The data come from the RNA Mapping Database (RMDB), libraries RFM100 and RFMREP. This 177-nucleotide RNA was probed chemically with 2A3 and DMS. For 2A3, 1,994 sequencing reads were counted. Values are in units of 0.01, from 0 to 300, in steps of 10.
RNA sequence: GGGAACGACUCGAGUAGAGUCGAAAACAGACUGUACUUCAGGGAUCAUUCUAUAGUCGUUUCUAGAGAAGUUCUCUGAAUGUGUAGAGCACUGAAACCACGAGGAGGAGGUGUGGUGUCUGUCUGAACUUUUCUCCCCAUUCGUGGGGAGAAAAGUAAAAGAAACAACAACAACAAC
Reactivity to 2A3 in 0.01 (KOAc 150mM, MgCl2 10mM, bicine 150mM(pH8.5), 24C), signal-to-noise 3, nucleotides 027 to 126: c000a000g060a040c000u020g000u050a000c000u000u020c010a000g040g000g000a000u000c040a300u060u000c030u020a050u040a040g070u070c090g170u050u170u070c030u020a000g000a000g000a080a000g000u000u010c030u000c000u000g000a010a080u160g020u000g060u050a070g020a030g060c080a020c070u090g040a100a010a010c000c010a030c090g050a170g040g020a050g060g020a060g000g050u020g000u040g040g060u020g020u000c040u010g050u000c060u080g030a010
Reactivity to DMS in 0.01 (KOAc 150mM, MgCl2 10mM, bicine 150mM(pH8.5), 24C), signal-to-noise 2, nucleotides 027 to 126: c040a030g000a040c020u010g000u000a040c000u000u010c010a010g000g000g000a020u000c010a130u000u000c000u010a070u010a030g010u000c300g000u010u010u000c020u000a020g010a030g000a020a050g000u000u000c010u000c000u020g020a010a010u020g020u000g010u000a020g000a110g020c050a020c020u030g000a190a160a060c000c020a100c200g020a130g000g010a130g000g000a250g020g010u010g010u000g000g000u000g000u010c010u010g000u030c040u000g010a140